[RMDB]
RNA sequence: GGGAACGACUCGAGUAGAGUCGAAAACAGGUUCGCCGCAGCCACGGGGUUGCCACGUUCUCGUGUGAGGCGAAAGUGCCCCACAGGCGGGGUGCCGAAGGUCUCAUAAGUAGGCGUUGCGGAACCCUCUUGGGUUCGUCUUCGGGCGGACCCAAGAAAAAGAAACAACAACAACAAC
Reactivity to 2A3 in 0.01 (KOAc 150mM, MgCl2 10mM, bicine 150mM(pH8.5), 24C), signal-to-noise 8, nucleotides 027 to 126: c040a010g060g020u030u020c060g050c100c040g050c090a030g030c030c010a030c020g010g010g000g010u010u030g010c000c000a000c000g010u050u020c010u000c020g030u040g010u010g060a020g000g010c070g110a030a020a000g010u040g000c000c000c000c000a040c010a040g300g060c130g010g000g000g000u010g010c000c010g060a130a030g150g000u020c000u000c000a040u050a110a050g100u120a030g030g000c030g030u030u040g000c030g040g090a040a040c000c000c000
Reactivity to DMS in 0.01 (KOAc 150mM, MgCl2 10mM, bicine 150mM(pH8.5), 24C), signal-to-noise 7, nucleotides 027 to 126: c120a130g000g010u010u000c070g000c020c030g010c060a100g000c080c030a110c010g000g000g000g000u000u000g000c000c000a000c000g000u000u000c000u000c000g010u010g010u000g000a030g010g010c010g010a070a210a070g010u010g010c000c000c000c000a090c230a130g010g000c180g010g000g000g020u000g000c000c010g010a170a170g000g000u000c000u000c010a050u010a150a070g010u040a050g000g010c050g000u000u000g030c030g000g000a070a030c020c000c030